[RMDB]
RNA sequence: GGGAACGACUCGAGUAGAGUCGAAAACUCUUGCACAGAAUCACCUUUCUAUAAUAACCAGUGCAAGAAGGGUUAUUAUACCAUUUAAUGUGCCGAGGCCACGCGGAGUACGAUUGAGGGUACAGCAAAAACGUGAAGUACUUCGGUACUUCACGAACCUACCUUAGACCUUCGGGUCUAAGGUAGGAAAAGAAACAACAACAACAAC
Reactivity to 2A3 in 0.01 (KOAc 150mM, MgCl2 10mM, bicine 150mM(pH8.5), 24C), signal-to-noise 3, nucleotides 027 to 156: c000u000c000u000u010g010c000a010c010a010g090a120a140u200c060a130c020c030u110u250u120c100u110a030u010a010a020u010a020a000c010c010a000g010u010g010c010a010a010g000a000a010g030g000g000u020u000a010u010u000a010u020a030c020c010a110u110u210u280a240a120u220g040u110g030c000c000g010a050g030g000c010c010a030c020g020c030g030g070a130g090u150a060c040g050a070u050u180g050a160g020g000g030u020a020c000a000g020c000a020a080a000a010a020c010g000u000g000a000a000g000u000a000c000u030u010c100g020g000u000a010c000u020u000c020a000c000g000a000a000
Reactivity to DMS in 0.01 (KOAc 150mM, MgCl2 10mM, bicine 150mM(pH8.5), 24C), signal-to-noise 1, nucleotides 027 to 156: c020u040c000u000u000g000c050a090c010a200g010a140a150u000c140a110c080c080u000u010u000c060u030a060u000a030a060u000a040a060c050c020a300g050u020g000c020a070a050g020a160a080g010g040g030u000u000a030u000u000a010u000a020c090c140a130u000u010u000a230a120u000g000u010g010c030c060g020a130g030g000c030c010a110c050g020c020g000g020a220g030u020a040c050g020a140u010u000g040a090g030g000g020u000a070c050a220g000c050a010a020a030a050a040c030g020u000g010a030a010g020u000a000c000u000u000c300g060g030u000a000c000u000u000c000a050c010g010a050a010